The data come from the RNA Mapping Database (RMDB), library TTRDES. An RNA of 177 nucleotides, treated with 2A3 and DMS and read out base by base. For 2A3 the reverse transcriptase was SuperScript II with manganese. DMS adducts were read by reverse transcription with MarathonRT.
RNA sequence: GGGAACGACUCGAGUAGAGUCGAAAAACAAUAAGAUAUGGAUUGCAAUCGGCCUUACCUAAGACAGCAUUUCGGAAACGAAAUGUCGAGGUAAGGAACUACCGGAUGCAAUCCUAAGUCAGUGAAACUCCUGUAAGAUCUUCGGAUCUUACAGGAGAAAAGAAACAACAACAACAAC
Reactivity to 2A3 in 0.01 (KOAc 150mM, MgCl2 10mM, bicine 150mM(pH8.5), 24C), signal-to-noise 1, nucleotides 027 to 126: a000c080a010a120u300a260a130g020a030u030a030u080g000g000a000u000u010g020c000a000a150u040c000g000g000c020c010u000u000a000c000c000u140a170a070g050a060c010a030g030c010a000u030u040u000c000g020g030a080a010a040c020g000a020a030a000u000g020u100c010g040a000g020g010u000a000a010g000g030a000a000c030u160a050c000c020g000g010a000u010g000c010a010a000u000c000c000u000a000a000g010u000c030a010g000u040g300a190a070a090
Reactivity to DMS in 0.01 (KOAc 150mM, MgCl2 10mM, bicine 150mM(pH8.5), 24C), signal-to-noise 2, nucleotides 027 to 126: a020c050a040a120u030a140a120g030a050u000a300u020g030g000a010u000u000g020c000a010a020u000c020g000g010c000c010u000u000a000c000c000u020a190a040g020a060c300a150g030c050a020u010u000u000c020g040g000a100a140a060c000g020a000a020a010u000g010u000c020g010a000g030g010u000a000a000g020g020a000a020c050u030a300c080c050g000g000a030u000g010c020a010a000u000c000c000u010a000a140g010u000c010a150g000u020g000a120a070a170